[RMDB]
RNA sequence: GGGAACGACUCGAGUAGAGUCGAAAAGAGGUGGCAUCACAAUCAUGAUGGAAGAUGAAGGAAGAGCAAAGUCACAUCUUACAUGGCAGGAGGGAAGAGAGCUUGUGUAGGGGAAUGCCCCUUUAUAAUUCAUAACUGCAUUCGUGCAGUUAUGAAUAAAAGAAACAACAACAACAAC
Reactivity to 2A3 in 0.01 (KOAc 150mM, MgCl2 10mM, bicine 150mM(pH8.5), 24C), signal-to-noise 6, nucleotides 027 to 126: g040a020g030g030u070g020g000c020a030u050c030a030c050a070a130u090c040a070u110g060a030u070g040g040a040a030g020a040u060g050a060a050g090g020a040a050g020a000g080c080a070a060a030g040u060c010a020c000a090u020c020u050u070a040c020a060u050g030g000c030a010g010g050a030g020g020g000a050a020g030a010g010a000g020c000u090u100g030u020g040u110a040g000g020g000g010a030a050u070g070c000c000c000c020u020u080u040a170u060a070
Reactivity to DMS in 0.01 (KOAc 150mM, MgCl2 10mM, bicine 150mM(pH8.5), 24C), signal-to-noise 7, nucleotides 027 to 126: g010a070g010g030u010g010g020c040a060u000c050a070c110a100a090u010c110a090u010g000a080u000g010g000a060a050g010a050u000g010a090a100g010g020a040a050g000a070g000c100a050a060a080g010u010c050a080c050a040u000c050u000u010a090c090a050u000g010g010c070a050g000g010a080g010g000g000a060a060g000a100g010a090g010c080u000u000g010u000g010u000a050g010g000g000g010a080a080u010g010c010c010c020c040u000u000u000a040u010a100